[RMDB]
RNA sequence: GGGAACGACUCGAGUAGAGUCGAAAAGUAGUAAUCGCGCCUCAGAAGGGCGCGGUGAAUACGUCCCUGCUCCUUGCACACACCGCCCGUCAAAGCACCCGAGUGAGGUCCGGAUGAGGCCUGGUCAGAUAACAAGAGAAUUCGUUCUCUUGUUAUCAAAAGAAACAACAACAACAAC
Reactivity to 2A3 in 0.01 (KOAc 150mM, MgCl2 10mM, bicine 150mM(pH8.5), 24C), signal-to-noise 9, nucleotides 027 to 126: g020u030a000g010u040a010a010u010c000g000c000g010c010c000u080c070a150g070a220a100g050g000g000c000g000c000g000g000u000g000a010a010u020a010c000g040u030c000c000c000u010g030c010u030c010c010u020u090g010c040a020c000a000c000a010c060c010g020c000c010c010g040u060c050a080a040a020g030c020a040c010c010c020g030a040g070u120g060a040g010g030u010c010c020g070g020a070u100g040a060g020g010c000c010u030g010g040u050c020a020
Reactivity to DMS in 0.01 (KOAc 150mM, MgCl2 10mM, bicine 150mM(pH8.5), 24C), signal-to-noise 9, nucleotides 027 to 126: g010u000a010g000u020a190a010u000c000g010c010g010c000c010u000c040a220g010a250a300g000g000g010c000g010c000g010g000u000g000a140a260u000a020c020g000u010c010c000c010u010g000c040u000c030c030u000u000g000c050a050c060a080c070a080c050c030g000c030c010c030g010u010c050a050a090a110g010c060a070c030c010c030g010a090g000u010g000a070g010g000u000c020c030g010g010a110u020g010a120g010g000c020c010u000g020g000u010c110a110